Source: RMDB library OK3TST, as collected in RNAgym.
Chemical mapping of a 207-nucleotide RNA with 2A3.
The 2A3 profile rests on 397 reads.
The RNA was probed in 150 mM KOAc, 10 mM MgCl2 and 150 mM bicine (pH 8.5) at 24 C.
[RMDB]
RNA sequence: GGGAACGACUCGAGUAGAGUCGAAAAUGUACUUCAUUAUUUCUGAUUUGUCCAAAAUUAAUAACAUGUACCGUUUUAGUUUGGCUGCUUUUCUCCGACUUUUCCAACGAGCUCUACAAAACAAACAGGUAAGCUGUUGGAUACCCUGUACCAGAGACACCAUUGGUGUGUUCGCACACCAAUGGUGAAAAGAAACAACAACAACAAC
Reactivity to 2A3 in 0.01 (KOAc 150mM, MgCl2 10mM, bicine 150mM(pH8.5), 24C), signal-to-noise 1, nucleotides 027 to 156: u070g010u060a070c020u050u130c060a100u010u250a110u090u090u050c070u140g040a150u040u080u160g030u190c020c000a060a000a040a100u120u120a080a080u160a130a040c050a100u160g050u070a080c000c030g020u060u000u000u090a020g000u000u070u040g000g020c000u000g000c000u080u180u100u070c080u060c020c030g020a050c070u070u000u070u000c010c000a000a000c100g200a020g000c010u000c030u060a020c010a030a190a180a030c070a160a170a010c030a000g020g130u040a040a020g010c010u000g000u010u000g040g000a000u000a030c020c020c000u000g010u020a040c000c020a010g020a090g030a170
Description
For 2A3 the reverse transcriptase was SuperScript II with manganese.